[RMDB]
RNA sequence: GGGAACGACUCGAGUAGAGUCGAAAAGAUCUUUAAUAACAACAGAAAAGCUCUGGCCGGUUCGAGGCUUGAGUGUUCUACAGGAAGGAUAUUUCUGCACAAAAACCUCACGGGACAGGACCUGCUCGCUGCACGGUUACUUCGGUAACCGUGCAGCAAAAGAAACAACAACAACAAC
Reactivity to 2A3 in 0.01 (KOAc 150mM, MgCl2 10mM, bicine 150mM(pH8.5), 24C), signal-to-noise 1, nucleotides 027 to 126: g000a010u240c040u060u070u060a140a260u160a050a000c000a000a000c010a250g300a080a000a080a000g030c030u050c030u010g000g000c000c000g250g010u060u030c070g070a000g000g120c000u070u030g000a000g000u240g000u000u000c060u060a110c000a000g030g000a000a000g070g030a060u110a050u300u030u000c000u000g000c050a000c080a240a020a000a000a000c000c000u000c010a000c000g000g000g150a140c000a080g020g000a090c000c000u160g000c140u030c020